RNA sequence: GGGAACGACUCGAGUAGAGUCGAAAAACGUACCUAUUCGUAGGUACGUGAUUAAAAGCUAGUCAUAUAAAAGGAACACUAGCAAUAUAGAAUCCUAUAUUAAUAGCACAUGUUUCGACAUGUGCAACUCCAUCCAUGAGUUCGCUCAUGGAUGGAGAAAAGAAACAACAACAACAAC
Reactivity to DMS in 0.01 (KOAc 150mM, MgCl2 10mM, bicine 150mM(pH8.5), 24C), signal-to-noise 1, nucleotides 027 to 126: a000c000g000u000a000c000c000u000a060u000u010c160g030u000a020g000g000u000a000c000g000u000g010a040u000u040a070a160a080a130g000c000u000a000g000u010c100a220u000a230u090a120a020a140a090g000g000a130a160c300a060c010u000a000g000c000a080a150u000a110u000a020g000a100a140u000c020c000u000a030u000a040u000u000a040a070u000a090g000c000a000c000a000u000g020u000u000u020c130g050a020c010a000u000g040u010g020c000a040a050
Reactivity to 2A3 in 0.01 (KOAc 150mM, MgCl2 10mM, bicine 150mM(pH8.5), 24C), signal-to-noise 2, nucleotides 027 to 126: a000c000g010u000a000c000c000u010a050u030u080c280g020u030a020g000g000u000a000c000g000u020g000a000u030u140a060a060a020a000g000c000u000a000g030u020c060a110u130a070u140a280a160a020a070g120g010a200a040c040a000c060u000a000g000c000a010a030u100a010u000a040g130a050a080u010c000c020u070a080u010a010u240u170a130a150u080a120g000c000a010c000a000u010g020u010u100u060c190g070a000c000a000u010g010u000g000c000a000a030

Notes
This 177-nucleotide RNA was probed chemically with DMS and 2A3. The reactions ran in a buffer of 150 mM KOAc, 10 mM MgCl2 and 150 mM bicine (pH 8.5), at 24 C. Source: RMDB library M2PK50, as collected in RNAgym. For 2A3, 1,597 sequencing reads were counted. Reactivities are given for positions 27 through 126. 2A3 is a SHAPE reagent: it acylates the 2'-hydroxyl of flexible nucleotides of all four kinds.